[RMDB]
RNA sequence: GGGAACGACUCGAGUAGAGUCGAAAAGAUAUGGAUGAGGUGGAGGCCAGUUUGGUCUUCGAUGAAACGCUUCGGAAACGAAGCGUGGAGAAGUCCAAACUGGCCGAUGAAGCCUCAUCCUAAGUCACCAUCACAUAGACUUCGGUCUAUGUGAUGGAAAAGAAACAACAACAACAAC
Reactivity to DMS in 0.01 (KOAc 150mM, MgCl2 10mM, bicine 150mM(pH8.5), 24C), signal-to-noise 1, nucleotides 027 to 126: g010a080u020a300u000g000g010a020u000g020a030g000g000u000g000g000a060g000g030c000c000a020g000u000u000u000g020g010u000c010u020u010c000g040a190u010g010a160a090a020c000g000c000u010u000c000g030g000a190a130a300c020g000a010a010g010c020g000u000g000g000a050g010a010a040g000u010c000c000a010a020a000c010u000g020g010c020c010g000a000u010g000a170a210g000c000c030u000c020a000u010c000c000u000a020a080g030u010c040a300
Chemical mapping of a 177-nucleotide RNA with DMS. For DMS, 1,136 sequencing reads were counted. Source: RMDB library TTRINS, as collected in RNAgym.